RNA sequence: GGGAACGACUCGAGUAGAGUCGAAAACACCUAACGUUCGCGUUAGGUGAAAGAUGCAUGUAAACCUGGAUCGACGCAUCAUGAAGAACCAGGAGAAAUAAAAAACGACAGGGUUCGCCCUGUCGAACAUAUGCCAUACGUUCGCGUAUGGCAUAUGAAAAGAAACAACAACAACAAC
Reactivity to DMS in 0.01 (KOAc 150mM, MgCl2 10mM, bicine 150mM(pH8.5), 24C), signal-to-noise 4, nucleotides 027 to 126: c000a010c000c000u000a000a000c000g010u010u010c220g040c020g010u000u000a010g010g010u000g010a020a050a080g020a040u000g000c050a060u000g010u000a060a120a140c000c000u010g000g010a100u000c030g020a160c080g000c070a010u000c090a070u010g020a080a200g010a100a060c010c000a000g010g010a240g000a090a100a080u010a010a080a050a070a150a110c020g010a010c010a010g000g010g010u000u000c270g010c000c000c000u000g000u010c000g010a020a100
Reactivity to 2A3 in 0.01 (KOAc 150mM, MgCl2 10mM, bicine 150mM(pH8.5), 24C), signal-to-noise 4, nucleotides 027 to 126: c010a010c000c010u000a000a000c010g000u040u060c290g000c000g130u000u010a000g010g000u020g000a000a000a000g000a010u110g020c070a060u110g060u290a070a080a140c000c010u000g000g010a080u070c040g040a050c060g010c050a160u110c020a020u230g060a060a100g030a030a040c000c000a000g070g030a050g090a020a130a020u160a030a150a020a010a010a020c010g000a000c000a000g030g000g010u040u080c130g070c060c010c010u000g000u000c000g000a000a010
Structure probing data (DMS and 2A3) for a 177-nucleotide construct. Values cover nucleotides 27 to 126. For DMS, 3,385 sequencing reads were counted. The RNA was probed in 150 mM KOAc, 10 mM MgCl2 and 150 mM bicine (pH 8.5) at 24 C.